The data come from the RNA Mapping Database (RMDB), library OK2TST. This 177-nucleotide RNA was probed chemically with 2A3 and DMS. Values are in units of 0.01, from 0 to 300, in steps of 10. DMS adducts were read by reverse transcription with MarathonRT. Reactivities are given for positions 27 through 126. For 2A3, 7,955 sequencing reads were counted. High 2A3 reactivity points to a flexible backbone, as in loops and unpaired stretches. Conditions: 150 mM KOAc, 10 mM MgCl2 and 150 mM bicine (pH 8.5), 24 C.

RNA sequence: GGGAACGACUCGAGUAGAGUCGAAAACUCAAGGCCUACCUUCCGGAGAUCCACAAGAGCCUGGGACCCUACGUGGGCCUCAUCAUCACCAACUGCAUCAUCAUGGGCCGGGCCGAGGCCUUUGCCCCAUCAAGCUAGUUUUCGAACUAGCUUGAUGAAAAGAAACAACAACAACAAC
Reactivity to 2A3 in 0.01 (KOAc 150mM, MgCl2 10mM, bicine 150mM(pH8.5), 24C), signal-to-noise 2, nucleotides 027 to 126: c020u030c030a020a030g020g000c010c000u030a060c020c010u140u060c030c010g020g020a090g050a150u030c030c010a070c030a140a080g020a010g090c010c030u020g020g010g020a070c000c020c020u050a070c150g060u150g020g000g000c010c010u020c020a030u040c000a030u030c010a010c040c000a060a060c040u070g050c010a080u040c000a020u000c000a030u100g030g000g000c020c010g010g000g000c020c030g040a070g030g030c040c020u050u040u070g020c000c010c000
Reactivity to DMS in 0.01 (KOAc 150mM, MgCl2 10mM, bicine 150mM(pH8.5), 24C), signal-to-noise 5, nucleotides 027 to 126: c080u010c060a110a060g000g000c010c010u000a090c060c050u010u010c060c060g010g010a080g000a080u000c020c020a070c110a080a090g000a090g000c060c100u000g040g010g000a080c020c020c010u000a080c220g020u000g000g010g010c020c000u000c030a040u010c070a050u000c070a070c050c050a060a070c070u000g010c050a050u000c040a040u000c070a080u000g000g000g010c030c140g000g010g010c070c070g010a090g010g000c010c020u000u000u010g020c020c000c010